[RMDB]
RNA sequence: GGGAACGACUCGAGUAGAGUCGAAAAAUACAUACUGACACCGGUUGCUCAACAGGCUGUGUGAGACAAUAGAAUAACAAGGCUGUCAAUUUGAGCUUGACGGCUGCAAACCGAAUGGAGUGAAAUCGUAACCGGACUCACUUCGGUGAGUCCGGAAUCAUUAGUGACGAUUCGUCGUCACUAAUGAAAAAGAAACAACAACAACAAC
Reactivity to 2A3 in 0.01 (KOAc 150mM, MgCl2 10mM, bicine 150mM(pH8.5), 24C), signal-to-noise 2, nucleotides 027 to 156: a000u170a000c050a010u130a030c020u030g110a030c030a020c080c030g030g000u060u070g000c010u010c030a020a050c000a110g100g000c010u070g050u030g010u060g130a010g030a000c070a030a160u090a120g200a070a080u180a090a010c030a060a000g020g000c000u000g000u010c000a000a010u090u070u150g030a020g050c030u000u000g030a030c000g000g000c010u020g040c020a140a020a000c010c020g040a050a060u150g070g020a010g000u060g050a090a080a020u170c080g040u050a020a090c000c000g000g000a000c000u000c000a000c000u020u010c090g030g010u010g000a000g000u000c000c000g000g000a000a000
Reactivity to DMS in 0.01 (KOAc 150mM, MgCl2 10mM, bicine 150mM(pH8.5), 24C), signal-to-noise 2, nucleotides 027 to 156: a120u000a110c020a100u010a120c070u010g000a130c010a120c040c030g050g030u010u000g030c050u020c050a060a120c040a110g010g040c000u010g020u000g010u010g000a170g020a080c050a100a140u010a090g010a080a090u010a060a110c100a050a110g000g000c000u000g010u020c010a030a030u000u000u000g000a160g040c300u010u000g030a020c000g030g030c000u040g020c060a040a080a080c030c030g020a060a210u000g010g000a080g050u000g010a080a050a080u010c070g020u000a100a120c020c010g050g030a020c000u000c000a030c000u000u000c300g030g050u000g050a020g020u010c000c000g000g000a010a020
This 207-nucleotide RNA was probed chemically with 2A3 and DMS. For 2A3 the reverse transcriptase was SuperScript II with manganese. It was measured as part of the RMDB library M2RFPK. The DMS profile rests on 2,758 reads. The reactions ran in a buffer of 150 mM KOAc, 10 mM MgCl2 and 150 mM bicine (pH 8.5), at 24 C. The 2A3 profile rests on 1,085 reads.